Conditions: 150 mM KOAc, 10 mM MgCl2 and 150 mM bicine (pH 8.5), 24 C. Chemical mapping of a 207-nucleotide RNA with DMS and 2A3. The 2A3 profile rests on 7,692 reads. Values cover nucleotides 27 to 156. The data come from the RNA Mapping Database (RMDB), library RNAMAK.
RNA sequence: GGGAACGACUCGAGUAGAGUCGAAAAGAUAUGGACCCAUUGUCAGCUUAUUCUUACACUUUGAUCUUUGAUCGGAAACGAUCAAAGGGAGUGUAAUUAGAAGCUUGGAUUUAUGGGUCCUAAGUCAAAGUGUAAUUCGCUUCGGCGAAUUACACAACGAUGGAAAUGUGUUCGCACAUUUCCAUCGAAAAGAAACAACAACAACAAC
Reactivity to DMS in 0.01 (KOAc 150mM, MgCl2 10mM, bicine 150mM(pH8.5), 24C), signal-to-noise 1, nucleotides 027 to 156: g010a150u000a190u010g030g020a030c000c000c000a080u000u000g010u000c000a040g070c000u000u000a080u000u000c030u010u000a000c000a020c000u000u000u050g010a130u010c000u010u000u000g000a010u000c010g020g000a150a120a300c000g010a020u000c000a000a010a010g010g010g000a020g010u000g020u000a000a000u000u000a010g000a040a020g030c000u020u000g030g010a040u000u000u000a040u010g020g040g040u000c000c010u000a020a080g020u000c020a110a050a190g010u000g000u010a000a000u000u000c010g050c000u010u000c300g090g050c010g000a020a000u000u000a000c000a000c040a010a080
Reactivity to 2A3 in 0.01 (KOAc 150mM, MgCl2 10mM, bicine 150mM(pH8.5), 24C), signal-to-noise 5, nucleotides 027 to 156: g030a010u050a040u100g000g000a000c000c010c000a000u010u020g010u010c000a000g000c010u020u020a020u030u040c000u000u010a000c000a000c010u140u200u180g190a200u130c000u010u000u000g000a000u000c000g010g020a050a100a040c010g000a010u000c000a000a000a000g000g000g010a000g000u000g000u000a000a000u000u020a010g030a040a000g010c010u060u140g150g010a030u120u240u190a010u010g000g010g000u000c000c000u000a060a010g040u010c050a070a060a050g000u000g000u000a000a010u000u000c000g000c020u040u110c300g060g000c000g000a000a000u000u000a000c000a000c000a000a010